[RMDB]
RNA sequence: GGGAACGACUCGAGUAGAGUCGAAAAAUACUUCUCAGGAUGGCGCGUUGCAGUCCAACAAGAUCCAGGGACUGUACAGAAUUUUCCUAUACCUCGAGUCGGGUUUGGAAUCUAAGGUUGAUUCGCUAAAACUUUACGUGGUUCGCCACGUAAAGAAGGAAUAAAGACAGUUCGCUGUCUUUAUUCCAAAAGAAACAACAACAACAAC
Reactivity to DMS in 0.01 (KOAc 150mM, MgCl2 10mM, bicine 150mM(pH8.5), 24C), signal-to-noise 1, nucleotides 027 to 156: a090u000a040c050u010u020c030u000c020a180g050g000a090u000g030g000c160g010c110g030u020u000g030c030a130g000u000c030c020a050a140c080a080a220g000a090u010c030c040a200g010g000g000a010c060u000g060u020a090c050a170g020a070a090u000u000u010u000c020c020u010a220u010a110c170c030u010c020g000a000g000u000c010g040g040g000u020u030u000g010g000a010a040u000c010u010a160a120g000g010u000u000g010a110u010u000c040g000c050u000a040a110a110a080c000u000u000u010a000c000g070u000g020g010u000u010c300g060c000c020a000c000g000u010a000a000a020g010a030a040
Reactivity to 2A3 in 0.01 (KOAc 150mM, MgCl2 10mM, bicine 150mM(pH8.5), 24C), signal-to-noise 2, nucleotides 027 to 156: a000u120a030c030u070u020c030u010c030a020g030g050a050u090g040g100c090g020c090g170u180u060g010c010a000g010u010c010c020a070a070c050a120a130g070a130u090c060c050a040g000g000g030a000c010u000g000u000a010c010a030g160a170a110u030u030u130u000c010c000u090a100u070a180c000c010u000c010g010a020g000u020c040g020g000g000u070u090u100g050g030a040a040u000c030u090a090a220g050g020u030u040g030a140u030u010c040g010c050u080a060a060a030a050c000u020u010u010a000c000g000u000g020g020u030u040c100g030c090c000a000c000g000u000a000a000a000g000a000a000
Conditions: 150 mM KOAc, 10 mM MgCl2 and 150 mM bicine (pH 8.5), 24 C.
Structure probing data (DMS and 2A3) for a 207-nucleotide construct.
2A3 is a SHAPE reagent: it acylates the 2'-hydroxyl of flexible nucleotides of all four kinds.
Source: RMDB library M2RFPK, as collected in RNAgym.
For DMS the reverse transcriptase was MarathonRT.